Chemical mapping of a 177-nucleotide RNA with 2A3 and DMS. The RNA was probed in 150 mM KOAc, 10 mM MgCl2 and 150 mM bicine (pH 8.5) at 24 C. The data come from the RNA Mapping Database (RMDB), library OK1LIB. The DMS profile rests on 46,939 reads. As a SHAPE reagent, 2A3 marks flexible, mostly unpaired nucleotides at the ribose 2'-OH. For 2A3, 50,688 sequencing reads were counted. 2A3 adducts were read by reverse transcription with SuperScript II with manganese.

RNA sequence: GGGAACGACUCGAGUAGAGUCGAAAAGUCCUAGCGAAAAGCUAGGACAAGUGCAUCGCUAGACAGAUCGUCGAAAAGACGAUCGAAAGAUGCACACGUCUAGCAAGUCGAGGAGAACUCGACAAAAAUACCUAAUGGUAUUCGUACCAUUAGGUAUAAAAGAAACAACAACAACAAC
Reactivity to 2A3 in 0.01 (KOAc 150mM, MgCl2 10mM, bicine 150mM(pH8.5), 24C), signal-to-noise 9, nucleotides 027 to 126: g000u000c000c000u000a000g010c010g080a190a160a090a010g000c000u000a000g000g000a000c000a000a010g000u000g010c010a020u020c030g050c110u100a040g030a120c050a050g010a020u000c000g030u000c000g030a050a180a060a120g000a000c000g000a000u000c000g000a000a000a000g050a010u090g030c000a000c000a000c020g070u010c040u060a050g090c080a180a030g000u000c000g000a010g020g030a160g030a190a150c000u000c000g000a000c000a000a020a000a010
Reactivity to DMS in 0.01 (KOAc 150mM, MgCl2 10mM, bicine 150mM(pH8.5), 24C), signal-to-noise 9, nucleotides 027 to 126: g000u000c000c000u000a020g000c010g000a120a080a080a140g020c000u000a000g000g000a000c000a020a050g010u000g010c000a020u010c030g010c170u030a070g010a120c180a200g000a000u000c000g010u000c010g000a110a070a120a160g000a010c000g010a000u000c000g000a070a090a110g000a030u010g010c010a000c010a060c210g000u020c030u000a070g010c110a130a120g000u000c000g000a010g000g010a190g020a130a160c000u000c000g000a010c010a010a040a060a100